Chemical mapping of a 177-nucleotide RNA with DMS. Reactivities are given for positions 27 through 126. The reactions ran in a buffer of 150 mM KOAc, 10 mM MgCl2 and 150 mM bicine (pH 8.5), at 24 C. DMS adducts were read by reverse transcription with MarathonRT. The data come from the RNA Mapping Database (RMDB), library TTRINS.
[RMDB]
RNA sequence: GGGAACGACUCGAGUAGAGUCGAAAAGAUAUGGAUUGGAAGCAGUAAGAGGUAACCAGAGAGGUUCUUCGGAAACGAAGACCUCGACGAAGGUUACUACCCACCUUACUGCUUCCAAUCCUAAGUCGCUCUUAAACAAGUUCGCUUGUUUAAGAGCAAAAGAAACAACAACAACAAC
Reactivity to DMS in 0.01 (KOAc 150mM, MgCl2 10mM, bicine 150mM(pH8.5), 24C), signal-to-noise 2, nucleotides 027 to 126: g000a100u000a300u010g000g000a000u000u000g000g000a010a020g020c000a020g020u000a000a000g000a180g010g000u010a000a000c000c000a100g010a150g030a000g020g000u000u020c000u010u000c010g020g000a070a030a260c000g030a020a010g000a080c000c010u000c000g020a140c300g010a100a070g010g000u000u000a010c000u000a060c090c100c170a300c250c000u010u000a000c000u000g000c000u000u000c000c000a000a000u000c000c000u020a040a100g020u000c080